An RNA of 207 nucleotides, treated with DMS and 2A3 and read out base by base. The reactions ran in a buffer of 150 mM KOAc, 10 mM MgCl2 and 150 mM bicine (pH 8.5), at 24 C. For DMS, 2,009 sequencing reads were counted. The data come from the RNA Mapping Database (RMDB), library OK3TST.
RNA sequence: GGGAACGACUCGAGUAGAGUCGAAAAAACCAGGCAGAAUGAGACGUGAAAAUCAUUUGCAUACUCAGUGUGGUCAAGGUUAGCAGCAGCCUGUGGCUCUGAAGAAGUAGAAUCACACGUGGUCCUGGAAUCUGAGAUUUCCUACAGCCCUCAGGAACUUUUAGUACCGGUUCGCCGGUACUAAAAGAAAAGAAACAACAACAACAAC
Reactivity to DMS in 0.01 (KOAc 150mM, MgCl2 10mM, bicine 150mM(pH8.5), 24C), signal-to-noise 1, nucleotides 027 to 156: a110a140c000c010a060g020g020c010a070g020a120a090u000g010a090g000a080c050g030u000g020a130a090a090a120u000c040a040u000u010u000g060c050a150u010a090c080u030c010a100g000u000g040u010g000g010u010c060a100a080g000g000u010u030a080g030c110a030g040c010a150g010c040c010u010g060u010g010g000c000u000c000u020g030a090a110g000a060a170g000u010a080g010a050a030u020c040a040c030a070c040g030u000g020g010u000c010c000u000g010g010a090a090u000c030u030g000a080g010a240u020u000u010c020c030u000a080c140a120g010c050c000c000u000c050a060g000g000a080a120
Reactivity to 2A3 in 0.01 (KOAc 150mM, MgCl2 10mM, bicine 150mM(pH8.5), 24C), signal-to-noise 2, nucleotides 027 to 156: a000a000c020c000a030g020g000c050a000g060a200a090u100g010a080g010a140c130g070u080g070a070a090a060a040u040c010a060u030u060u150g060c000a040u100a160c020u010c050a030g030u010g030u050g080g000u030c010a090a050g090g010u070u090a040g040c040a020g000c060a000g020c030c000u190g040u130g070g000c000u000c000u080g030a040a000g040a030a010g020u090a020g100a110a020u040c030a030c000a010c030g040u020g020g010u060c000c000u000g000g020a010a010u030c050u010g020a020g020a150u020u030u040c000c010u030a050c050a060g050c000c040c000u040c020a000g010g060a040a010